[RMDB]
RNA sequence: GGGAACGACUCGAGUAGAGUCGAAAAUGGGUCGACCGGCGAUCGGGCAUUAAUUCUGGCGCCACAAAGCCUCGACUAUGUCGUUAGCUUUAUUGCCUCGCUGCAGGCCGGAAUUGUCGCGGUUCCGGCCCCGGGAGUGAUUCGUCACUCCCGGGGCAAAAGAAACAACAACAACAAC
Reactivity to 2A3 in 0.01 (KOAc 150mM, MgCl2 10mM, bicine 150mM(pH8.5), 24C), signal-to-noise 1, nucleotides 027 to 126: u080g010g050g030u060c030g060a040c000c010g070g020c040g060a060u070c000g000g000g000c010a030u100u160a010a080u100u120c050u020g060g000c040g100c050c040a070c120a040a070a020g000c040c000u020c020g040a060c060u160a110u260g030u020c010g000u000u050a030g000c000u050u040u060a060u210u160g010c000c000u040c060g090c110u130g030c050a030g050g000c000c000g000g000a030a030u010u040g060u040c080g000c040g140g120u050u000c010c000g040
Reactivity to DMS in 0.01 (KOAc 150mM, MgCl2 10mM, bicine 150mM(pH8.5), 24C), signal-to-noise 1, nucleotides 027 to 126: u000g000g010g020u000c010g000a150c110c010g070g020c090g040a090u010c060g040g030g010c020a070u000u000a050a070u000u000c060u000g010g000c030g000c040c110a040c160a030a030a030g000c020c130u000c070g010a010c020u000a150u000g010u000c010g010u000u000a090g010c040u000u010u000a090u040u000g020c020c020u000c170g020c170u000g000c080a110g000g030c000c010g010g000a010a010u000u020g020u020c060g010c080g000g000u010u000c000c000g020